[RMDB]
RNA sequence: GGGAACGACUCGAGUAGAGUCGAAAAGAUAUGGACUCAAGCUGCGAAGUACUGGGUCGGAAACGACCUGUAUGGAGCUUGGUCCUAAGUCAAUGCGUACUUCAUAAGUUCGCUUAUGAAGUACGAACCUGAACAGCAAGUUCGCUUGCUGUUCAGGAAAAGAAACAACAACAACAAC
Reactivity to 2A3 in 0.01 (KOAc 150mM, MgCl2 10mM, bicine 150mM(pH8.5), 24C), signal-to-noise 4, nucleotides 027 to 126: g030a020u060a040u120g010g010a050c050u080c300a000a000g000c040u300g300c090g130a130a030g020u010a010c190u300g040g050g000u000c010g000g010a060a050a010c000g010a000c010c000u010g000u000a020u060g050g020a000g030c000u010u010g000g000u000c000c000u000a120a020g030u020c040a040a090u170g100c030g000u010a010c000u010u000c000a020u000a020a020g000u030u120c210g080c200u000u000a020u000g000a000a010g000u000a000c000g000a000a030
Reactivity to DMS in 0.01 (KOAc 150mM, MgCl2 10mM, bicine 150mM(pH8.5), 24C), signal-to-noise 3, nucleotides 027 to 126: g030a010u000a300u010g020g000a010c010u010c010a020a040g010c000u000g010c170g010a160a240g000u000a000c010u020g030g020g000u010c000g010g020a060a090a180c000g010a010c000c000u000g010u000a010u000g000g000a020g020c000u000u000g010g020u000c000c000u000a030a050g000u010c020a090a150u000g000c010g010u000a000c000u000u000c000a000u000a000a010g020u000u010c250g000c000u000u000a000u000g000a030a000g010u000a000c000g000a030a060
Chemical mapping of a 177-nucleotide RNA with 2A3 and DMS. The reactions ran in a buffer of 150 mM KOAc, 10 mM MgCl2 and 150 mM bicine (pH 8.5), at 24 C.